[RMDB]
Structure probing data (DMS) for a 177-nucleotide construct. Reactivities are rounded to 0.1 and cut off at 0 and 3. The reactions ran in a buffer of 150 mM KOAc, 10 mM MgCl2 and 150 mM bicine (pH 8.5), at 24 C.
RNA sequence: GGGAACGACUCGAGUAGAGUCGAAAAGCUACGUUCGGAAGUGAUAACCGCUGAAAGCAUCUAAGCGGGAAGCACGUUUCAAGAUGAGGUUUCCCACCCACCUUGGUGGGGUAAGGCCCCCAGGAGAAUAGGUUAGAGAAUUCGUUCUCUAACCUAUAAAAGAAACAACAACAACAAC
Reactivity to DMS in 0.01 (KOAc 150mM, MgCl2 10mM, bicine 150mM(pH8.5), 24C), signal-to-noise 8, nucleotides 027 to 126: g010c020u000a120c070g010u000u000c150g010g010a040a100g010u000g000a020u010a190a300c010c000g020c010u000g000a130a120a160g010c170a040u000c050u000a180a050g010c000g010g000g000a070a120g000c020a010c010g010u000u000u010c020a070a110g000a040u010g010a270g010g010u000u000u000c000c000c000a240c040c020c030a050c030c020u000u000g020g030u010g020g000g000g000u010a040a090g000g010c020c000c010c010c020a120g000g000a120g020a110